Source information
An RNA of 177 nucleotides, treated with DMS and 2A3 and read out base by base. The RNA was probed in 150 mM KOAc, 10 mM MgCl2 and 150 mM bicine (pH 8.5) at 24 C. DMS adducts were read by reverse transcription with MarathonRT. For DMS, 89,005 sequencing reads were counted. For 2A3 the reverse transcriptase was SuperScript II with manganese.

[RMDB]
RNA sequence: GGGAACGACUCGAGUAGAGUCGAAAAGAGCAUAGUUCAGAGGUAUGCUAUAACGGUAUGUGCCGUUUAUGUUCACAUACAGGGAUAUGGCAUCAAAUACCCUUCUAUAGUAUUUGAUUGAACUAUAGAUAGUAGUGUCAUUCGUGACAUUGCUAUCAAAAGAAACAACAACAACAAC
Reactivity to DMS in 0.01 (KOAc 150mM, MgCl2 10mM, bicine 150mM(pH8.5), 24C), signal-to-noise 9, nucleotides 027 to 126: g010a140g020c170a030u000a000g000u000u000c010a030g010a170g020g020u030a040u000g000c010u000a010u000a020a080c050g000g000u000a010u000g010u000g010c300c070g020u040u040u040a070u050g010u030u010c010a010c010a010u000a000c020a050g010g010g010a140u010a010u000g000g000c000a050u000c040a020a020a020u000a010c000c120c170u020u050c190u020a070u030a150g000u000a010u000u000u000g010a120u030u010g000a010a010c010u000a010u000a090
Reactivity to 2A3 in 0.01 (KOAc 150mM, MgCl2 10mM, bicine 150mM(pH8.5), 24C), signal-to-noise 9, nucleotides 027 to 126: g100a010g020c060a010u020a010g010u010u020c020a010g030a040g170g170u160a040u070g000c000u000a000u010a050a020c020g020g000u010a010u020g020u040g020c020c020g020u010u110u100a140u160g050u090u100c020a010c010a040u050a020c020a050g100g070g020a050u030a020u060g020g000c010a020u010c020a030a040a020u030a010c020c040c000u110u100c090u140a130u130a070g010u010a040u020u020u040g090a080u020u030g000a010a000c000u000a010u020a070